[RMDB]
RNA sequence: GGGAACGACUCGAGUAGAGUCGAAAAUCAAUGCGUCGACCUUCUGUAACAUCACCAACUUUUGAAGUAGCUGCUCGUCCUUUGACUUCAAUGGAUGUUAGAUCCUCUCAUAAUGCCGAGACUGAGACCAUCACGUGAGUUUCGACUCACGUGAUGGAAAAGAAACAACAACAACAAC
Reactivity to DMS in 0.01 (KOAc 150mM, MgCl2 10mM, bicine 150mM(pH8.5), 24C), signal-to-noise 2, nucleotides 027 to 126: u020c100a080a150u020g000c050g050u010c050g010a090c050c040u000u010c060u010g010u000a050a070c080a050u010c040a100c030c090a070a140c060u000u000u000u000g020a060a060g000u000a060g010c030u010g010c050u000c080g020u010c020c060u000u000u000g010a090c050u000u000c040a020a080u000g000g010a020u000g000u010u000a080g020a100u030c030c030u000c050u000c060a020u000a080a090u000g020c050c030g040a120g020a060c130u010g010a100g030a210
Reactivity to 2A3 in 0.01 (KOAc 150mM, MgCl2 10mM, bicine 150mM(pH8.5), 24C), signal-to-noise 2, nucleotides 027 to 126: u040c020a020a030u100g020c020g030u060c040g030a090c000c040u050u000c020u070g080u060a050a010c000a030u070c030a000c050c010a060a110c110u030u050u130u100g050a070a000g010u080a030g020c010u030g000c020u020c030g030u030c020c000u020u040u080g070a090c020u060u020c110a000a130u060g070g000a000u040g020u050u010a040g000a120u040c010c000u000c000u010c020a030u060a120a050u160g060c030c010g030a000g000a020c030u010g040a020g030a060

Chemical mapping of a 177-nucleotide RNA with DMS and 2A3.
It was measured as part of the RMDB library OK2TST.
For 2A3, 2,130 sequencing reads were counted.
The reactions ran in a buffer of 150 mM KOAc, 10 mM MgCl2 and 150 mM bicine (pH 8.5), at 24 C.